RNA sequence: GGGAACGACUCGAGUAGAGUCGAAAAUUAAUCCUCCCGGGAGAGCCGCUAAGGGGGAAACUCUAUGCGGUACUGCCUGAUAGGGUGCUUGGGAGUGCCCCGGGAGGUCUCGUAGAGCCGUCGUAAAAGUCCGUAAUAUAUUCGUAUAUUACGGACUAAAAGAAACAACAACAACAAC
Reactivity to DMS in 0.01 (KOAc 150mM, MgCl2 10mM, bicine 150mM(pH8.5), 24C), signal-to-noise 4, nucleotides 027 to 126: u000u000a170a130u010c010c000u000c010c000c000g020g000g010a050g000a300g010c000c010g020c010u000a140a110g000g000g020g000g000a130a100a080c000u000c010u000a300u010g010c000g010g020u000a010c030u000g030c000c000u000g000a110u000a160g000g000g010u000g000c000u010u010g000g000g020a100g030u000g000c000c000c000c000g020g000g000a010g010g010u000c000u000c010g000u010a170g010a060g020c010c030g010u010c060g020u000a060a070a140
Conditions: 150 mM KOAc, 10 mM MgCl2 and 150 mM bicine (pH 8.5), 24 C. Chemical mapping of a 177-nucleotide RNA with DMS. DMS adducts were read by reverse transcription with MarathonRT. The DMS profile rests on 3,001 reads.